[RMDB]
RNA sequence: GGGAACGACUCGAGUAGAGUCGAAAAUCGAGGAGGAACGUGAGAGUCGUGAACGGUUUGACCCCGACGAUGAGAAAUACUUUUCCAAGUACGCUGACUGGGACUCUUUUUCCCAGGGUGUCAAACACACGCAUUACUGCUUCGGCAGUAAUGCGUGAAAAGAAACAACAACAACAAC
Reactivity to 2A3 in 0.01 (KOAc 150mM, MgCl2 10mM, bicine 150mM(pH8.5), 24C), signal-to-noise 1, nucleotides 027 to 126: u110c020g000a000g050g010a000g010g040a080a050c030g020u090g100a130g000a010g040u120c050g040u040g040a070a020c060g000g020u010u070u070g030a050c070c000c010c000g020a020c060g030a050u080g040a040g140a080a090a030u250a190c030u070u110u010u000c010c000a070a000g120u050a080c020g020c070u040g070a070c010u010g030g010g020a060c020u030c000u100u100u020u050u000c000c000c000a000g120g000g030u090g000u000c040a030a040a000c040a020
Reactivity to DMS in 0.01 (KOAc 150mM, MgCl2 10mM, bicine 150mM(pH8.5), 24C), signal-to-noise 2, nucleotides 027 to 126: u000c050g010a010g000g020a130g000g020a040a080c090g030u010g000a140g040a040g020u000c040g030u000g010a230a140c130g000g010u000u000u000g000a090c060c010c010c020g030a120c200g040a090u020g000a070g000a090a050a060u010a070c120u010u000u000u000c030c070a080a020g000u010a030c150g020c170u010g000a130c040u000g000g020g000a090c300u010c030u000u010u000u000u000c030c000c040a080g000g000g000u000g000u000c020a000a030a060c100a260

Chemical mapping of a 177-nucleotide RNA with 2A3 and DMS. Values cover nucleotides 27 to 126.